An RNA of 177 nucleotides, treated with DMS and 2A3 and read out base by base. Values cover nucleotides 27 to 126. It was measured as part of the RMDB library OK2TST. The RNA was probed in 150 mM KOAc, 10 mM MgCl2 and 150 mM bicine (pH 8.5) at 24 C. For DMS the reverse transcriptase was MarathonRT.

RNA sequence: GGGAACGACUCGAGUAGAGUCGAAAAGUGAGAUUGGGUGGUGCAUCGACUCUGUGUUUGGUUUGGGCGUUUAUGGUCACUCAAGCAUCAGCAUUCUGCACGAUGUAGACGAGGGCUACAAGGUGAGCAGCAGUGAUUAUUUCGAUAAUCACUGCUGAAAAGAAACAACAACAACAAC
Reactivity to DMS in 0.01 (KOAc 150mM, MgCl2 10mM, bicine 150mM(pH8.5), 24C), signal-to-noise 8, nucleotides 027 to 126: g010u000g010a060g000a120u010u000g010g010g020u000g010g020u000g010c070a080u000c050g010a070c040u000c050u000g010u010g010u000u000u000g000g010u000u010u000g010g010g000c070g010u000u000u000a070u010g020g010u000c040a070c050u000c040a070a130g010c030a040u000c040a100g010c050a130u000u000c120u000g010c020a070c090g000a110u000g010u000a040g010a070c150g010a090g000g000g010c030u000a040c100a040a090g010g010u000g010a100g010
Reactivity to 2A3 in 0.01 (KOAc 150mM, MgCl2 10mM, bicine 150mM(pH8.5), 24C), signal-to-noise 5, nucleotides 027 to 126: g110u070g030a060g000a150u090u100g030g010g000u030g000g000u030g040c000a050u050c030g040a050c030u000c030u060g050u000g040u110u110u090g130g000u030u040u050g040g000g020c050g000u040u060u070a110u090g040g020u010c030a050c130u040c030a020a030g000c010a030u040c010a020g020c020a050u160u080c060u140g010c010a030c100g070a050u030g010u050a020g000a070c080g040a080g030g070g000c000u030a030c010a050a050g120g020u120g050a040g020